[RMDB]
RNA sequence: GGGAACGACUCGAGUAGAGUCGAAAAGAGCGCGAGGCCGUCCUCGAGUACGUCCGCGACGUUCCCUACGACGUCAUCGAGCGGCGGGGGCCAGAGGACUCGUCGCGGUGGGUUACGAGCCGCGGCGGGUCCAUACCGGAUUCGUCCGGUAUGGACCAAAAGAAACAACAACAACAAC
Reactivity to DMS in 0.01 (KOAc 150mM, MgCl2 10mM, bicine 150mM(pH8.5), 24C), signal-to-noise 9, nucleotides 027 to 126: g010a120g010c050g010c050g010a170g010g010c030c030g010u000c070c010u000c030g000a070g010u010a030c030g000u000c010c070g010c090g000a160c070g010u000u000c010c000c010u000a240c240g000a030c020g010u000c090a080u000c060g000a060g000c100g020g010c010g010g000g000g010g000c070c050a090g010a120g000g000a060c040u000c010g020u010c000g010c000g000g020u000g010g020g010u000u010a110c150g020a270g000c010c010g000c020g020g010c010g010
Reactivity to 2A3 in 0.01 (KOAc 150mM, MgCl2 10mM, bicine 150mM(pH8.5), 24C), signal-to-noise 4, nucleotides 027 to 126: g050a000g000c070g010c030g050a040g060g060c020c000g020u020c000c020u010c010g000a030g030u050a020c020g020u030c030c010g040c050g110a130c050g040u040u050c020c000c000u010a040c030g020a000c010g020u020c020a100u040c030g030a020g040c060g010g000c020g010g000g000g000g010c020c010a050g040a030g050g020a030c030u000c060g000u000c010g000c020g000g000u050g010g110g020u160u130a070c070g040a020g010c000c010g010c000g000g000c000g000

This 177-nucleotide RNA was probed chemically with DMS and 2A3. The RNA was probed in 150 mM KOAc, 10 mM MgCl2 and 150 mM bicine (pH 8.5) at 24 C. It was measured as part of the RMDB library OK2TST. For DMS the reverse transcriptase was MarathonRT. The 2A3 profile rests on 11,273 reads.